[RMDB]
RNA sequence: GGGAACGACUCGAGUAGAGUCGAAAAGAUAUGGAGAAUCUUUGAUGACCUGUGUAACAAGUGGUCGGAAACGACCACCGCCCACAGCAAGAAGACUCCUAAGUCAAAAGUCUGCUUCGGCAGACAAUCUUCAUGAUGAGUUCGCUCAUCAUGAAGAAAAAGAAACAACAACAACAAC
Reactivity to 2A3 in 0.01 (KOAc 150mM, MgCl2 10mM, bicine 150mM(pH8.5), 24C), signal-to-noise 2, nucleotides 027 to 126: g020a020u100a060u180g030g040a070g090a300a300u060c020u000u090u070g250a300u130g070a130c010c010u010g000u010g060u100a150a070c090a210a070g000u000g020g000u010c000g020g020a100a080a020c000g000a000c040c000a000c010c000g010c010c040c000a000c000a000g020c000a110a300g000a010a010g030a020c000u010c000c000u050a210a040g060u030c030a030a000a020a290g000u000c010u000g000c020u070u060c250g180g000c010a020g000a010c000a000a000
Reactivity to DMS in 0.01 (KOAc 150mM, MgCl2 10mM, bicine 150mM(pH8.5), 24C), signal-to-noise 3, nucleotides 027 to 126: g000a040u000a300u010g000g000a000g000a190a110u000c000u000u000u000g000a090u010g010a100c300c000u000g010u000g000u010a050a050c130a140a050g000u010g010g010u000c010g010g010a080a040a190c000g000a000c000c000a010c000c040g000c300c140c000a010c000a020g000c010a030a100g000a000a010g000a060c010u000c000c000u000a060a120g000u010c010a030a040a080a130g000u000c000u000g030c000u000u000c170g040g000c000a000g020a010c000a000a040